[RMDB]
RNA sequence: GGGAACGACUCGAGUAGAGUCGAAAACUAAGGUUUCUUAGAUGAGACACCAAGAACAUGAUCCACAUGAGAAAAAAAUAGAAAUACUGGACUUACUGAAGUUAAGAAUGUCUUUUGUCAGGACACUGUUAAGAGAAUGGAAGUACGAGCUCCAGAACAACACUUUGAUCUUCGGAUCAAAGUGUUGAAAAGAAACAACAACAACAAC
Reactivity to DMS in 0.01 (KOAc 150mM, MgCl2 10mM, bicine 150mM(pH8.5), 24C), signal-to-noise 1, nucleotides 027 to 156: c020u000a160a130g000g000u000u000u020c000u000u010a070g010a230u010g010a080g040a090c060a200c030c060a050a140g010a060a100c060a070u000g000a110u020c010c040a140c070a110u000g010a160g010a050a000a000a160a140a090a220u030a070g000a160a040a110u000a130c020u040g070g000a110c040u000u000a040c030u000g000a250a110g000u000u000a040a100g020a060a050u000g020u000c000u000u020u000u000g000u000c240a090g000g020a030c060a010c010u000g060u000u020a030a030g000a140g020a080a020u000g000g010a190a060g040u000a050c020g000a040g000c130u000c000c000a040g010a110a220
Reactivity to 2A3 in 0.01 (KOAc 150mM, MgCl2 10mM, bicine 150mM(pH8.5), 24C), signal-to-noise 3, nucleotides 027 to 156: c050u060a060a060g050g040u040u030u020c030u030u090a270g010a280u180g000a100g020a020c040a010c040c010a080a040g030a100a040c030a070u060g010a050u030c050c000a040c040a140u120g080a060g000a110a130a070a010a000a080a040u180a040g060a020a090a010u070a220c020u020g000g000a000c000u020u060a000c010u100g050a010a020g040u020u040a100a030g070a180a100u080g020u040c000u030u080u080u060g200u140c090a040g000g050a010c020a030c090u060g030u170u090a070a010g040a010g080a090a000u010g000g010a070a000g000u020a010c110g030a010g000c060u000c000c020a000g040a010a030
Structure probing data (DMS and 2A3) for a 207-nucleotide construct. The 2A3 profile rests on 1,039 reads. 2A3 is a SHAPE reagent: it acylates the 2'-hydroxyl of flexible nucleotides of all four kinds. Reactivities are given for positions 27 through 156. The data come from the RNA Mapping Database (RMDB), library OK3TST. Conditions: 150 mM KOAc, 10 mM MgCl2 and 150 mM bicine (pH 8.5), 24 C.